[RMDB]
RNA sequence: GGGAACGACUCGAGUAGAGUCGAAAACUGUUUUCGAUCAUAUAUCAGUUUCGGUAUAGCAAUCAUCAAAGAUCGCAUUUGACAGUUAUGUCAAAGGGACACACCCUUCGCGCGUCCUGGGGCGUGCCCCUAUGGCCGUGUUCGCACGGCCAUAGGGAAAAGAAACAACAACAACAAC
Reactivity to DMS in 0.01 (KOAc 150mM, MgCl2 10mM, bicine 150mM(pH8.5), 24C), signal-to-noise 1, nucleotides 027 to 126: c040u010g020u000u000u030u010c040g000a000u030c060a150u010a020u000a010u000c000a140g000u000u010u000c120g020g030u000a040u000a000g000c190a140a110u000c110a060u000c210a070a100a140g010a010u000c010g020c300a140u000u000u000g000a000c020a020g010u000u000a030u000g010u000c120a020a030a060g000g000g000a050c030a050c150a060c030c040c010u010u010c100g000c020g000c100g010u010c010c020u020g050g000g010g020c040g030u000g000c070
Reactivity to 2A3 in 0.01 (KOAc 150mM, MgCl2 10mM, bicine 150mM(pH8.5), 24C), signal-to-noise 1, nucleotides 027 to 126: c030u020g060u090u010u050u080c020g000a040u030c030a030u030a000u000a020u130c020a080g100u010u120u180c110g020g000u020a020u030a040g040c090a070a060u110c010a020u050c050a080a110a020g010a000u000c030g000c040a040u090u050u040g040a020c010a020g050u170u110a010u140g010u020c020a090a050a000g040g020g040a000c030a000c000a020c060c010c000u080u120c030g000c000g000c000g020u000c000c050u110g070g040g040g020c000g020u020g010c010
Structure probing data (DMS and 2A3) for a 177-nucleotide construct. The DMS profile rests on 790 reads. Values cover nucleotides 27 to 126. DMS adducts were read by reverse transcription with MarathonRT. The RNA was probed in 150 mM KOAc, 10 mM MgCl2 and 150 mM bicine (pH 8.5) at 24 C.